[RMDB]
RNA sequence: GGGAACGACUCGAGUAGAGUCGAAAACGGUCACCUGGCAAUCAAGUACGGCUUUAAAGGGCCUAACAUCGCCAUUACAACCGCAUGUACUACAGGUACUCACAACAUUGGUCAGGCAAUGCGUAUGCUGAGGUAACUCAUUCGUGAGUUACCUCAGAAAAGAAACAACAACAACAAC
Reactivity to 2A3 in 0.01 (KOAc 150mM, MgCl2 10mM, bicine 150mM(pH8.5), 24C), signal-to-noise 3, nucleotides 027 to 126: c010g020g030u040c000a000c040c010u020g010g000c030a020a090u080c040a170a020g010u050a050c070g010g010c000u060u050u120a170a210a090g120g000g010c000c000u050a030a040c030a040u070c050g000c010c010a000u090u100a070c070a040a020c020c020g020c060a050u080g020u030a030c000u050a050c050a030g080g000u010a030c020u030c030a060c030a110a100c030a060u040u090g050g000u090c070a040g050g040c000a030a060u040g020c020g050u080a060u180g030
Reactivity to DMS in 0.01 (KOAc 150mM, MgCl2 10mM, bicine 150mM(pH8.5), 24C), signal-to-noise 3, nucleotides 027 to 126: c060g010g000u000c060a080c110c060u000g010g000c040a090a070u000c120a080a060g020u000a070c130g010g000c050u000u000u000a100a110a130g030g020g010c000c010u000a120a060c130a030u000c170g020c000c010a030u000u000a070c190a080a040c030c040g020c030a120u000g000u020a050c040u030a100c090a060g000g030u010a020c020u000c070a100c120a080a030c080a030u000u000g010g010u000c070a060g000g000c020a050a010u010g010c060g010u000a080u000g010
About this RNA:
This 177-nucleotide RNA was probed chemically with 2A3 and DMS. The reactions ran in a buffer of 150 mM KOAc, 10 mM MgCl2 and 150 mM bicine (pH 8.5), at 24 C. For DMS the reverse transcriptase was MarathonRT. For 2A3, 3,190 sequencing reads were counted.